[RMDB]
RNA sequence: GGGAACGACUCGAGUAGAGUCGAAAAGAAGAGAAAGGAGACACAGGGACAGUCUCCAGAGGUUCCUAAGGGCUCGAUCGCGCCUGCCGGGAAUCAUGGACUCCCGGUUGUCCAUGAAAGAAGAAGACGCACCUAAAUCGUUCGCGAUUUAGGUGCGAAAAGAAACAACAACAACAAC
Reactivity to 2A3 in 0.01 (KOAc 150mM, MgCl2 10mM, bicine 150mM(pH8.5), 24C), signal-to-noise 1, nucleotides 027 to 126: g060a030a020g130a000g050a000a090a000g040g020a000g000a000c000a000c030a210g000g010g000a060c020a080g010u020c060u030c010c000a000g000a000g180g000u000u000c020c000u120a040a040g000g000g000c000u000c110g170a250u150c160g000c000g020c010c060u060g040c110c000g000g000g000a000a000u020c010a040u120g000g000a050c050u000c030c000c070g060g000u000u000g000u000c060c060a070u080g070a030a000a030g200a050a000g140a000a000g030a000
Reactivity to DMS in 0.01 (KOAc 150mM, MgCl2 10mM, bicine 150mM(pH8.5), 24C), signal-to-noise 1, nucleotides 027 to 126: g000a070a160g030a160g000a080a140a210g000g000a110g050a000c020a010c000a100g020g000g000a210c210a060g040u010c000u020c000c000a120g000a050g000g000u000u000c000c010u050a170a190g000g000g000c030u000c000g000a120u080c290g000c130g000c080c000u000g010c020c240g000g000g000a040a040u000c030a010u070g000g000a030c000u000c000c010c000g020g030u000u050g000u000c020c000a010u000g030a060a100a060g000a100a120g060a200a060g000a200

Structure probing data (2A3 and DMS) for a 177-nucleotide construct. For DMS the reverse transcriptase was MarathonRT. For 2A3 the reverse transcriptase was SuperScript II with manganese. For DMS, 929 sequencing reads were counted. The data come from the RNA Mapping Database (RMDB), library OK1LIB.